Chemical mapping of a 177-nucleotide RNA with DMS. DMS adducts were read by reverse transcription with MarathonRT. The RNA was probed in 150 mM KOAc, 10 mM MgCl2 and 150 mM bicine (pH 8.5) at 24 C.

RNA sequence: GGGAACGACUCGAGUAGAGUCGAAAAGAAGACAACUUCGGUUGUCUUCAAGGGGCUGUUUUUCUCCCUGACUUUCAGCCCAAAACAAAAGAGUCAGCAAAACGAGACUACCCUUCGGGGUAGUCAAGUGUACAGACGAGUUCGCUCGUCUGUACACAAAAGAAACAACAACAACAAC
Reactivity to DMS in 0.01 (KOAc 150mM, MgCl2 10mM, bicine 150mM(pH8.5), 24C), signal-to-noise 1, nucleotides 027 to 126: g010a040a000g000a000c000a010a000c010u020u010c160g000g000u000u000g010u000c000u020u000c010a120a070g000g000g010g020c020u000g030u010u010u010u000u000c030u000c130c230c010u000g000a010c010u010u010u000c020a020g000c000c010c010a090a010a030a220c100a000a020a020a020g000a000g050u000c020a040g000c300a070a070a060a090c140g020a300g000a000c000u000a000c000c000c000u000u030c150g040g010g050g000u000a000g010u000c010a000a110